Notes
The data come from the RNA Mapping Database (RMDB), library OK3TST. Structure probing data (2A3) for a 207-nucleotide construct. For 2A3, 343 sequencing reads were counted. Conditions: 150 mM KOAc, 10 mM MgCl2 and 150 mM bicine (pH 8.5), 24 C.

RNA sequence: GGGAACGACUCGAGUAGAGUCGAAAAGAAAACAAAUAUUUAGAAAGUAAAACCGAUUUCCAUCCUUUACAUGCCAUUAUACAUCCUAUACAAAACUCUGGAAAUCUGCCUAUUGAGGUAAUUACGGAGCACUACCUAAUGUGUUUCAAGGGAAAGCGUGUUACAGCCUAUUCGUAGGCUGUAACACAAAAGAAACAACAACAACAAC
Reactivity to 2A3 in 0.01 (KOAc 150mM, MgCl2 10mM, bicine 150mM(pH8.5), 24C), signal-to-noise 1, nucleotides 027 to 156: g040a000a050a000a040c110a020a110a070u220a100u220u300u300a090g060a100a100a040g030u060a040a040a020a020c080c040g020a060u000u000u030c060c030a060u110c040c000u050u030u250a050c030a110u050g060c060c050a030u200u140a100u060a080c100a020u010c010c030u130a110u030a240c030a000a080a080a080c000u020c010u030g030g000a130a000a000u050c100u030g030c030c000u130a210u220u080g020a050g000g000u050a100a000u000u000a000c070g010g020a000g020c000a020c030u080a050c000c080u130a040a040u070g020u000g000u040u030u080c020a020a030g030g000g050a000a280a000g000c000